[RMDB]
RNA sequence: GGGAACGACUCGAGUAGAGUCGAAAAGAAUAUAAAGCGCGAGGGACCAAUUGCGAGCGACCUCGCGCAACCAGCUGACGACUCACCAAGCGCGCAGCCAGGUGGAGGUUACGCUCGCAAGAGAAGAACUACGGAGUAAUUUCGAUUACUCCGUAGUAAAAGAAACAACAACAACAAC
Reactivity to 2A3 in 0.01 (KOAc 150mM, MgCl2 10mM, bicine 150mM(pH8.5), 24C), signal-to-noise 7, nucleotides 027 to 126: g010a070a020u250a030u110a180a140a000g010c010g000c000g010a010g010g030g020a030c040c040a100a220u090u040g010c000g000a000g000c010g020a030c000c000u000c000g000c000g000c000a000a010c000c000a000g020c000u030g060a190c010g090a120c010u050c080a110c040c050a110a040g070c040g010c030g010c140a000g010c010c010a090g030g010u040g040g080a070g030g070u130u070a020c010g000c000u010c000g000c000a000a000g010a000g000a110a020g040a030
Reactivity to DMS in 0.01 (KOAc 150mM, MgCl2 10mM, bicine 150mM(pH8.5), 24C), signal-to-noise 4, nucleotides 027 to 126: g000a160a120u050a050u040a060a100a130g030c000g020c000g020a030g000g010g000a180c110c100a050a050u000u000g000c020g000a030g000c000g000a050c000c000u000c000g020c020g040c030a000a000c020c010a300g000c010u000g000a110c000g000a080c030u010c120a220c150c140a090a080g000c070g000c070g020c000a000g030c000c050a110g000g010u000g000g000a080g000g020u010u030a100c010g010c000u000c000g000c000a010a080g000a140g030a100a090g010a070